[RMDB]
Chemical mapping of a 207-nucleotide RNA with 2A3 and DMS. For 2A3 the reverse transcriptase was SuperScript II with manganese. Source: RMDB library OK3TST, as collected in RNAgym. DMS adducts were read by reverse transcription with MarathonRT. Values are in units of 0.01, from 0 to 300, in steps of 10. Conditions: 150 mM KOAc, 10 mM MgCl2 and 150 mM bicine (pH 8.5), 24 C. Reactivities are given for positions 27 through 156. For DMS, 6,728 sequencing reads were counted.
RNA sequence: GGGAACGACUCGAGUAGAGUCGAAAAAUGUGAGUUGACCUUUGAUUUUGAAUGACCACAGUCACGGUUGAAGCAUUCAGGUCUGUUAUGGCUGCAAGAGUCCCAGUGUAAGAAACAAAUAGGGCCAGGUGUGGUGGCUCACGCCUGUGAUGCUAGCACCCUUUCCUUAUUUCGAUAAGGAAAGGGUAAAAGAAACAACAACAACAAC
Reactivity to 2A3 in 0.01 (KOAc 150mM, MgCl2 10mM, bicine 150mM(pH8.5), 24C), signal-to-noise 2, nucleotides 027 to 156: a010u090g020u010g060a090g090u080u130g130a170c010c000u040u070u080g060a110u020u170u120u100g120a100a050u070g070a070c030c020a030c050a050g030u040c020a000c070g070g020u080u090g090a050a000g030c030a020u000u060c020a010g050g000u000c000u010g030u090u060a100u100g010g000c000u020g030c030a090a040g060a020g130u020c000c000c010a060g020u060g020u040a120a110g070a090a130a060c070a030a130a080u070a110g040g000g000c000c000a020g010g000u040g010u000g000g090u020g020g010c040u020c050a010c010g000c000c060u060g020u080g000a030u070g030c060u020a020g100c030
Reactivity to DMS in 0.01 (KOAc 150mM, MgCl2 10mM, bicine 150mM(pH8.5), 24C), signal-to-noise 3, nucleotides 027 to 156: a080u000g000u010g010a140g020u000u000g010a070c040c030u010u000u000g000a080u010u000u000u000g020a070a050u000g010a080c030c050a100c090a100g020u010c060a060c060g000g000u000u000g030a100a190g000c030a090u000u010c040a070g020g000u000c000u000g030u000u000a100u000g000g000c010u000g020c030a100a110g000a170g000u000c010c010c020a210g030u000g010u010a050a110g000a150a100a110c080a030a060a200u000a080g020g020g010c040c010a020g040g010u000g020u000g000g010u010g020g000c130u000c000a040c030g020c000c020u000g000u000g000a110u000g020c050u000a160g000c160